The data come from the RNA Mapping Database (RMDB), library M2RFPK. Structure probing data (2A3 and DMS) for a 207-nucleotide construct. Values cover nucleotides 27 to 156.
RNA sequence: GGGAACGACUCGAGUAGAGUCGAAAAACCUUAUUUUGAGAAGCUGAGGGAUUUGGCCCAUAGAAGCUUCAGCAACCGACUUUAAAUAGCACGGUUCUAAUACCAACGAGCAACUCGAAUGAUAAGUAAAACGUUGACAAGUUCGCUUGUCAACGAACUGUAUAAGAUAGUUCGCUAUCUUAUACAGAAAAGAAACAACAACAACAAC
Reactivity to 2A3 in 0.01 (KOAc 150mM, MgCl2 10mM, bicine 150mM(pH8.5), 24C), signal-to-noise 4, nucleotides 027 to 156: a000c070c010u140u130a300u080u110u110u120g170a110g010a010a000g010c010u020g020a020g010g000g010a050u040u030u060g040g000c000c000c020a040u120a100g060a070a010g000c000u010u010c010a000g000c020a020a020c000c020g080a030c060u110u100u230a120a250a270u170a080g040c150a110c270g000g000u010u000c020u050a080a160u050a120c000c020a050a020c050g050a020g030c060a070a070c050u050c110g060a090a070u080g070a060u050a160a000g030u060a030a120a040a060c010g000u000u000g000a000c010a000a000g010u040u060c120g030c150u010u000g000u020c000a000a000c000g000a040a000
Reactivity to DMS in 0.01 (KOAc 150mM, MgCl2 10mM, bicine 150mM(pH8.5), 24C), signal-to-noise 2, nucleotides 027 to 156: a100c030c020u000u000a110u000u000u000u000g010a090g000a060a120g010c040u000g020a150g040g020g020a160u000u000u000g000g000c000c000c010a230u010a140g000a030a070g020c000u000u000c020a030g000c040a040a040c020c000g020a070c010u010u000u000a090a170a140u000a020g050c000a060c000g040g010u000u000c050u010a050a080u020a130c020c020a040a170c030g020a120g010c040a080a120c080u010c050g010a100a060u000g000a130u000a010a070g000u010a060a070a100a110c030g030u000u000g010a010c010a000a010g010u010u000c250g020c020u000u010g000u000c010a000a010c000g000a000a040
DMS adducts were read by reverse transcription with MarathonRT. The reactions ran in a buffer of 150 mM KOAc, 10 mM MgCl2 and 150 mM bicine (pH 8.5), at 24 C. The DMS profile rests on 2,984 reads.